Conditions: 150 mM KOAc, 10 mM MgCl2 and 150 mM bicine (pH 8.5), 24 C. This 177-nucleotide RNA was probed chemically with 2A3 and DMS. For 2A3, 6,472 sequencing reads were counted.
RNA sequence: GGGAACGACUCGAGUAGAGUCGAAAAGAUAUGGACCCACAAGAAGGAGCGUAUAUUCGGAAACGAAUAUGACGCGCGAAACUUUGUGGGUCCUAAGUCAAAAGCGCAUGAGUUCGCUCAUGCGCAAGAGUAUACGACUGUUCGCAGUCGUAUACUCAAAAGAAACAACAACAACAAC
Reactivity to 2A3 in 0.01 (KOAc 150mM, MgCl2 10mM, bicine 150mM(pH8.5), 24C), signal-to-noise 3, nucleotides 027 to 126: g000a010u000a010u040g000g010a000c000c010c010a010c010a000a050g300a140a040g170g160a120g030c000g000u000a000u010a000u010u010c000g000g000a010a000a000c000g000a000a000u020a010u100g250a070c010g000c000g000c030g280a210a120a020c010u020u030u060g000u000g000g000g000u010c000c000u000a000a000g000u010c010a010a000a060a050g000c000g000c010a010u000g000a000g010u060u140c250g080c100u000c010a000u000g000c000g000c000a000a000
Reactivity to DMS in 0.01 (KOAc 150mM, MgCl2 10mM, bicine 150mM(pH8.5), 24C), signal-to-noise 2, nucleotides 027 to 126: g000a020u000a010u020g000g010a030c000c000c000a010c000a050a100g010a110a060g010g000a080g030c000g040u000a010u000a000u000u000c000g000g010a010a020a020c000g010a040a000u000a010u000g020a030c010g040c010g060c240g020a150a080a090c020u000u010u020g030u010g010g000g000u000c000c000u020a000a070g000u010c010a100a090a120a180g000c010g020c000a000u000g010a010g000u010u000c290g020c000u000c000a000u000g000c000g040c000a010a030